RNA sequence: GGGAACGACUCGAGUAGAGUCGAAAAGGGGCGGUGAUGACCCCAACAUGCCAUCUGAGUGUCGGUGCUGAAAUCCAGAGGCUGUUUCUGAGCUGAAAAUCCUAGGUCAUGUUCGCAUGACCUAGGACUCCAUGGAAUUCUUCGGAAUUCCAUGGAGAAAAGAAACAACAACAACAAC
Reactivity to DMS in 0.01 (KOAc 150mM, MgCl2 10mM, bicine 150mM(pH8.5), 24C), signal-to-noise 1, nucleotides 027 to 126: g000g000g060g040c150g010g020u000g020a120u000g000a160c050c000c010c040a060a100c050a040u000g010c000c000a060u000c020u000g000a090g020u000g010u010c060g010g000u010g000c040u000g000a120a070a080u000c110c020a080g000a110g000g020c060u010g000u000u000u000c070u000g000a100g000c070u000g000a070a040a110a180u000c000c000u000a000g000g010u000c000a010u000g000u000u020c210g000c010a020u000g000a020c000c000u000a000g000g000a000
Reactivity to 2A3 in 0.01 (KOAc 150mM, MgCl2 10mM, bicine 150mM(pH8.5), 24C), signal-to-noise 1, nucleotides 027 to 126: g000g000g000g000c150g000g170u220g140a180u150g100a140c040c140c050c020a000a000c060a030u100g000c000c000a190u010c040u070g090a050g140u110g040u020c030g000g040u150g100c060u140g000a160a100a060u080c020c010a000g000a030g110g000c020u060g010u000u010u020c010u030g030a010g040c050u120g130a050a040a040a040u000c040c010u010a000g000g000u000c000a010u010g060u030u050c150g000c070a000u010g000a000c000c000u000a000g000g000a000